[RMDB]
RNA sequence: GGGAACGACUCGAGUAGAGUCGAAAAGAUAUGGAGCCGUAGAGAAUCUGCACGUUGAAAUCGGAAACGAUGGAGUGCUGAUUGUAGGCUCCUAAGUCAAACGUCACCGUCUUCGGACGGUGACGAACAUUGUAAUGAUGUUCGCAUCAUUACAAUGAAAAGAAACAACAACAACAAC
Reactivity to 2A3 in 0.01 (KOAc 150mM, MgCl2 10mM, bicine 150mM(pH8.5), 24C), signal-to-noise 7, nucleotides 027 to 126: g030a020u080a050u180g000g010a000g010c050c070g130u300a070g040a020g080a290a010u020c020u040g010c010a000c030g210u300u080g030a040a040a010u010c010g010g010a090a030a030c000g000a010u010g000g030a040g000u010g000c020u020g010a010u000u030g090u090a050g000g000c000u000c000c000u000a010a010g000u010c020a040a030a050c010g000u000c000a000c000c000g020u010c010u030u070c200g100g000a000c000g000g000u000g010a000c010g000a000a000
Reactivity to DMS in 0.01 (KOAc 150mM, MgCl2 10mM, bicine 150mM(pH8.5), 24C), signal-to-noise 9, nucleotides 027 to 126: g010a040u000a300u000g000g000a010g020c000c000g010u010a190g010a130g000a030a010u000c000u000g000c000a010c010g010u000u010g000a080a110a030u000c000g010g000a110a080a170c010g010a010u000g000g000a100g010u000g010c000u000g000a010u000u000g010u000a100g010g010c000u000c000c000u000a010a050g010u000c030a080a080a210c020g000u000c000a000c010c000g010u000c000u000u010c240g020g000a010c010g000g010u000g000a000c000g010a030a090
Structure probing data (2A3 and DMS) for a 177-nucleotide construct.
For DMS the reverse transcriptase was MarathonRT.
Reactivities are given for positions 27 through 126.